[RMDB]
About this RNA:
Chemical mapping of a 177-nucleotide RNA with 2A3 and DMS. The DMS profile rests on 12,477 reads. Conditions: 150 mM KOAc, 10 mM MgCl2 and 150 mM bicine (pH 8.5), 24 C. High DMS reactivity at an A or C suggests that its Watson-Crick edge is free.

RNA sequence: GGGAACGACUCGAGUAGAGUCGAAAAGAGUCAGUGUGCGAUUCUGACUGGGUAUCUUAUAAGCUUACAAUAGGGAGACAAGGUGAGCGUGUAACUCCUUCCAACAUUUUCACAGUCACCACUGACCACUUGAUUGCAAAUUCGUUUGCAAUCAAGUAAAAGAAACAACAACAACAAC
Reactivity to 2A3 in 0.01 (KOAc 150mM, MgCl2 10mM, bicine 150mM(pH8.5), 24C), signal-to-noise 9, nucleotides 027 to 126: g120a010g000u010c010a000g000u020g070u090g100c100g100a140u160u070c050u090g020a020c000u000g000g010g040u070a080u050c040u060u180a090u090a300a070g070c040u070u110a040c050a100a220u100a210g040g030g010a070g030a050c060a090a050g130g020u110g030a030g060c090g020u040g030u040a060a060c010u020c010c000u080u070c040c020a190a080c090a220u060u080u090u100c100a080c010a050g000u010c000a000c020c000a000c020u010g010a010c000c000
Reactivity to DMS in 0.01 (KOAc 150mM, MgCl2 10mM, bicine 150mM(pH8.5), 24C), signal-to-noise 6, nucleotides 027 to 126: g010a130g010u000c000a000g000u000g010u040g050c200g010a060u010u030c170u010g010a050c160u010g010g000g020u010a030u020c090u010u000a050u020a060a070g010c050u000u010a020c060a080a080u020a150g000g000g040a110g000a090c110a080a150g010g020u000g000a020g010c040g000u010g010u000a040a060c140u000c030c060u010u000c070c050a090a120c200a090u030u000u010u010c040a060c060a000g010u010c000a070c060c000a000c010u000g010a020c010c000